[RMDB]
RNA sequence: GGGAACGACUCGAGUAGAGUCGAAAACACGACAAUUGGCGUCCCUGGGUGGGCUCGAAAUACAACCAAAAGUGCCUUAUUGUUGUGAGUCAUAAGGUUAUACCCUAGGGGUCUUUGGCACAGUCAAGUGUACUCUGCGAUUCGUCGCAGAGUACACAAAAGAAACAACAACAACAAC
Reactivity to 2A3 in 0.01 (KOAc 150mM, MgCl2 10mM, bicine 150mM(pH8.5), 24C), signal-to-noise 2, nucleotides 027 to 126: c010a020c000g100a040c030a130a240u140u020g020g010c000g050u000c040c000c000u000g040g000g020u030g000g060g000c060u040c050g040a100a030a000u300a000c050a020a000c000c000a070a000a000a170g080u090g040c000c000u130u080a170u090u110g160u000u050g030u020g080a000g030u000c000a030u080a300a000g040g040u080u140a000u120a180c010c000c000u090a050g000g040g050g000u030c030u050u130u030g030g040c030a000c000a040g000u050c060a300a000
Reactivity to DMS in 0.01 (KOAc 150mM, MgCl2 10mM, bicine 150mM(pH8.5), 24C), signal-to-noise 1, nucleotides 027 to 126: c000a060c100g030a020c110a090a080u010u040g010g000c300g000u020c020c000c000u000g000g030g000u000g050g000g040c060u020c000g060a000a160a110u030a000c020a000a030c060c090a010a000a090a190g000u000g000c050c000u000u000a100u000u000g000u000u000g000u020g000a070g000u010c040a190u090a060a090g000g050u090u060a090u000a050c020c000c000u000a050g050g040g000g000u000c000u000u000u030g000g010c020a020c000a180g000u000c110a000a070